[RMDB]
RNA sequence: GGGAACGACUCGAGUAGAGUCGAAAAUACGCUGGUAGCAGCAAGUAGCAGCUCGAUCCGCAGAUGAGCGGAAUAUACAUAUGAAAAUGGAUCUCGAUAGAGCUGCUACAAUCGAGACCAUUAGAGAACUACCGCAUUAGUUCGCUAAUGCGGUAGUAAAAGAAACAACAACAACAAC
Reactivity to DMS in 0.01 (KOAc 150mM, MgCl2 10mM, bicine 150mM(pH8.5), 24C), signal-to-noise 3, nucleotides 027 to 126: u050a060c210g000c000u010g000g020u070a120g000c000a020g050c000a140a190g010u000a000g010c000a000g000c000u010c000g040a130u000c000c000g000c000a130g000a210u070g040a170g000c000g000g020a040a060u040a050u040a120c300a130u080a110u030g000a120a060a040a030u000g000g010a150u010c000u010c030g000a030u020a120g000a000g020c010u010g000c000u000a000c030a070a040u010c010g000a010g010a010c000c000a010u000u000a070g020a220g030a080
Reactivity to 2A3 in 0.01 (KOAc 150mM, MgCl2 10mM, bicine 150mM(pH8.5), 24C), signal-to-noise 6, nucleotides 027 to 126: u200a050c080g000c010u010g070g070u180a170g210c020a000g010c010a040a020g010u020a000g000c000a000g010c010u010c000g050a070u020c020c000g000c020a020g140a300u210g120a070g040c000g000g010a010a000u130a000u060a000c130a010u170a070u180g230a180a110a000a000u060g040g060a230u010c010u010c000g020a030u060a130g020a000g000c000u000g000c000u010a000c000a000a010u010c020g000a000g000a010c020c000a010u030u070a080g080a000g010a060